[RMDB]
RNA sequence: GGGAACGACUCGAGUAGAGUCGAAAAAGGCUAAUAAGUCUGUUGGUAUUAUAUCUAUGCCUUUGGGAUAUGUGUCUCAUGGUUUAGACUUAAUGCAAGCAGGGAGUGUCGUGCGUAGAGUUAACGUUACUUUGGACUAGUUCGCUAGUCCAAAGUAAAAAGAAACAACAACAACAAC
Reactivity to DMS in 0.01 (KOAc 150mM, MgCl2 10mM, bicine 150mM(pH8.5), 24C), signal-to-noise 2, nucleotides 027 to 126: a020g000g000c010u010a090a090u000a080a130g010u000c010u000g010u010u010g010g010u000a000u000u000a010u000a110u000c000u000a030u000g000c010c010u000u010u010g010g020g020a010u000a120u000g020u030g020u000c020u000c010a020u000g000g000u000u000u000a000g010a010c080u010u000a000a000u000g000c020a050a040g000c020a030g000g000g010a080g020u010g020u000c050g020u030g020c090g000u010a060g010a100g010u000u010a050a080c150g000u010
Reactivity to 2A3 in 0.01 (KOAc 150mM, MgCl2 10mM, bicine 150mM(pH8.5), 24C), signal-to-noise 1, nucleotides 027 to 126: a020g060g000c020u080a040a030u100a300a040g040u080c020u000g040u000u020g040g020u040a000u030u000a050u010a000u000c000u000a000u020g010c040c000u070u050u040g000g000g030a010u080a100u240g270u150g000u040c010u000c000a020u010g020g100u030u000u000a000g000a020c000u000u030a010a000u020g030c030a000a010g000c010a010g020g040g010a060g080u080g090u040c030g000u050g080c020g030u020a030g030a010g050u060u050a050a090c020g010u010